RNA sequence: GGGAACGACUCGAGUAGAGUCGAAAAUUAAAGCGCGAAAAAGAUCGAUCGAUCGUUUGAACGCGCAAGUCGAAGUUUCAUACGGGCAUACUAGCUAGCUAGCUAGCAAAACAAACUUCGUAAAAAACCUACUACCAAGUUUCGACUUGGUAGUAGGAAAAGAAACAACAACAACAAC
Reactivity to DMS in 0.01 (KOAc 150mM, MgCl2 10mM, bicine 150mM(pH8.5), 24C), signal-to-noise 3, nucleotides 027 to 126: u000u010a060a110a100g000c000g010c010g010a080a060a030a060a020g000a010u000c000g020a140u010c230g000a000u000c000g000u000u000u000g020a190a130c000g010c010g010c000a050a050g030u010c010g000a010a010g000u000u000u000c140a120u000a080c150g010g010g010c120a120u020a130c010u000a020g000c010u000a160g020c140u000a050g010c000u000a030g010c030a040a110a050a090c080a020a020a020c000u000u000c000g020u020a000a030a060a100a080a020
Reactivity to 2A3 in 0.01 (KOAc 150mM, MgCl2 10mM, bicine 150mM(pH8.5), 24C), signal-to-noise 2, nucleotides 027 to 126: u150u080a100a080a060g010c000g000c010g040a060a010a000a010a010g020a010u000c040g060a100u180c160g010a000u000c060g110u020u080u030g050a150a000c000g000c000g000c000a000a010g040u030c010g020a020a000g000u000u000u090c120a070u140a210c110g060g060g000c050a040u100a120c020u010a000g010c000u000a040g150c030u070a020g000c000u020a010g000c050a050a070a020a010c030a000a010a010c000u010u020c020g000u050a140a030a000a000a000a060
Chemical mapping of a 177-nucleotide RNA with DMS and 2A3.
For 2A3, 1,764 sequencing reads were counted.
The reactions ran in a buffer of 150 mM KOAc, 10 mM MgCl2 and 150 mM bicine (pH 8.5), at 24 C.
Source: RMDB library M2PK90, as collected in RNAgym.